[RMDB]
RNA sequence: GGGAACGACUCGAGUAGAGUCGAAAAGCGUCUUUUCUUGCUUGGAUCCAUUUCUCGAGGACGUCCUCCCUUCCUCCCCUCCGGGUCCUCUUCGUCUCGGACUGGCUCAUCUUCGGAGUGGGGGCGGCAACUCUUCAAUCUUCGGAUUGAAGAGUUGAAAAGAAACAACAACAACAAC
Reactivity to 2A3 in 0.01 (KOAc 150mM, MgCl2 10mM, bicine 150mM(pH8.5), 24C), signal-to-noise 2, nucleotides 027 to 126: g000c000g040u130c110u100u300u130u110c110u260u260g010c010u040u020g030g030a050u050c030c010a060u060u090u020c010u000c020g030a020g030g040a160c000g000u020c000c020u050c000c010c000u050u100c010c030u000c010c010c000c000u000c010c000g050g000g020u040c020c000u030c030u070u060c040g080u010c040u030c170g000g000a010c000u000g010g010c020u020c060a170u030c090u200u130c020g020g000a010g000u070g000g000g000g010g010c000g000g000
Reactivity to DMS in 0.01 (KOAc 150mM, MgCl2 10mM, bicine 150mM(pH8.5), 24C), signal-to-noise 4, nucleotides 027 to 126: g020c030g010u010c170u000u020u020u000c120u010u020g020c040u010u010g010g000a100u000c030c020a180u010u010u000c020u000c010g010a030g010g010a130c050g010u000c020c060u020c020c020c020u000u000c010c000u000c000c000c020c010u000c010c010g000g000g000u000c030c040u000c120u000u010c080g010u000c140u010c080g020g010a020c030u000g010g010c300u000c040a090u000c070u010u020c040g010g010a020g020u010g020g010g010g000g020c300g000g000